Chemical mapping of a 207-nucleotide RNA with DMS and 2A3. For DMS, 2,755 sequencing reads were counted. The RNA was probed in 150 mM KOAc, 10 mM MgCl2 and 150 mM bicine (pH 8.5) at 24 C. 2A3 adducts were read by reverse transcription with SuperScript II with manganese.
[RMDB]
RNA sequence: GGGAACGACUCGAGUAGAGUCGAAAAAUAUUUGGGGGCAUCUGCCUCUUGGAGGUAGUAAUGGGAUUGAGCUGCUAUCUCUCAUGCUUCUAAAGACUAGGGAAGCCUAUGGCCGAGGCAGGAGAAUUGCUUGAGCCCAGGAGUUCGAGACCUGGCAUAUUAUGCCCAUGUUCGCAUGGGCAUAAUAAAAAGAAACAACAACAACAAC
Reactivity to DMS in 0.01 (KOAc 150mM, MgCl2 10mM, bicine 150mM(pH8.5), 24C), signal-to-noise 2, nucleotides 027 to 156: a030u000a060u010u040u010g020g040g020g030g030c020a060u000c070u000g020c010c010u030c000u000u010g020g020a060g000g030u000a030g000u000a060a140u000g010g000g040a150u010u000g010a130g020c070u010g030c050u010a020u000c020u000c010u000c090a050u000g000c020u000u000c020u000a170a080a110g020a100c090u010a200g010g010g000a090a100g010c030c070u010a070u000g020g050c110c120g010a010g010g010c010a060g000g030a120g000a070a090u000u000g010c030u010u020g000a130g030c090c040c000a060g020g020a150g030u000u000c060g000a210g000a090c000c000u000g000g040c050a270
Reactivity to 2A3 in 0.01 (KOAc 150mM, MgCl2 10mM, bicine 150mM(pH8.5), 24C), signal-to-noise 2, nucleotides 027 to 156: a010u200a190u060u120u070g030g000g000g000g000c020a000u030c030u060g000c000c010u010c050u010u090g020g010a020g050g000u030a020g020u010a100a160u140g010g020g100a100u040u130g060a080g050c050u040g010c010u050a010u000c010u000c000u010c020a010u100g000c000u010u000c000u030a130a220a190g040a140c100u080a060g040g030g030a040a000g030c020c020u140a080u120g000g030c080c040g000a010g010g000c010a020g030g020a050g020a040a090u100u040g020c050u050u060g030a010g020c000c000c000a030g010g010a040g050u130u160c050g020a040g030a050c010c020u010g000g030c010a020